[RMDB]
RNA sequence: GGGAACGACUCGAGUAGAGUCGAAAACAAAGUCCCUGAGAGAUGGCUCUGCUGUCCAGCAUCUCUCUACGCACAUAGUUAGCAGCACAGUUUUUAGAUGUCAGCAGCGGUGCUUACAUAGGGCAGAGGGAUCAGUAGUGUUCGCACUACUGAUCCCAAAAGAAACAACAACAACAAC
Reactivity to DMS in 0.01 (KOAc 150mM, MgCl2 10mM, bicine 150mM(pH8.5), 24C), signal-to-noise 1, nucleotides 027 to 126: c130a120a110a180g050u000c000c000c000u010g000a010g000a060g010a030u010g010g000c010u010c070u030g020c060u020g010u010c020c030a080g020c030a020u000c000u000c000u000c000u010a040c200g000c030a030c010a080u000a100g030u000u010a150g040c010a240g000c060a070c100a220g020u000u010u080u000u040a080g000a150u000g000u010c110a130g020c010a060g000c060g000g000u000g020c030u000u000a050c250a060u020a030g000g000g030c000a040g000a120

This 177-nucleotide RNA was probed chemically with DMS.